[RMDB]
RNA sequence: GGGAACGACUCGAGUAGAGUCGAAAAGAUAUGGAGCGGUGGGAGGUCUUGAUCGGAAACGAUCGGGACCGAAGAACACCGAACUACUCCUAAGUCAAACGACGAUUCAGUUCGCUGAAUCGUCGAACUUACAGCCACAGUUCGCUGUGGCUGUAAGAAAAGAAACAACAACAACAAC
Reactivity to DMS in 0.01 (KOAc 150mM, MgCl2 10mM, bicine 150mM(pH8.5), 24C), signal-to-noise 2, nucleotides 027 to 126: g020a010u000a070u000g000g000a010g080c030g000g040u000g000g000g000a050g020g010u010c000u000u000g040a000u000c010g000g010a020a030a100c000g000a000u000c010g000g000g000a020c000c000g010a060a130g020a080a290c030a000c000c000g000a050a060c200u000a250c000u000c000c000u000a020a080g000u000c030a110a160a210c030g000a010c010g000a010u000u000c000a010g010u000u000c260g000c010u000g010a000a000u000c000g000u000c010g000a010a040
Conditions: 150 mM KOAc, 10 mM MgCl2 and 150 mM bicine (pH 8.5), 24 C. The record gives the reactivity of an RNA of 177 nucleotides to DMS. For DMS, 1,533 sequencing reads were counted. Source: RMDB library TTRDEL, as collected in RNAgym. Values cover nucleotides 27 to 126.